[RMDB]
RNA sequence: GGGAACGACUCGAGUAGAGUCGAAAACAGGAAACUGGUUAAUCGUUUUCCUUGGCAGUAUAGCGGAAACCAUAAAUAAGAAGAACUCUAAGUGCUUGAGUAGAGUUAAAAUAAUUAGACAGGCAAUUAAGGUACUCCACGUUCGCGUGGAGUACAACCUUCUCUUGUGGUUCGCCACAAGAGAAGGAAAAGAAACAACAACAACAAC
Reactivity to 2A3 in 0.01 (KOAc 150mM, MgCl2 10mM, bicine 150mM(pH8.5), 24C), signal-to-noise 2, nucleotides 027 to 156: c070a010g050g060a030a050a020c080u170g050g000u080u170a090a090u250c040g010u030u030u070u100c020c020u050u040g050g010c010a010g030u090a070u110a120g040c030g020g000a020a040a020c010c000a050u080a140a030a040u130a080a030g040a030a020g020a040a010c010u000c000u000a010a000g030u030g290c000u000u000g000a000g000u000a000g010a000g000u120u130a040a020a000a000u150a010a010u260u000a000g000a000c000a010g000g000c000a010a040u170u210a120a060g060g000u000a000c000u000c000c000a000c020g010u030u010c160g020c000g070u010g000g060a000g030u000a000c000a000a000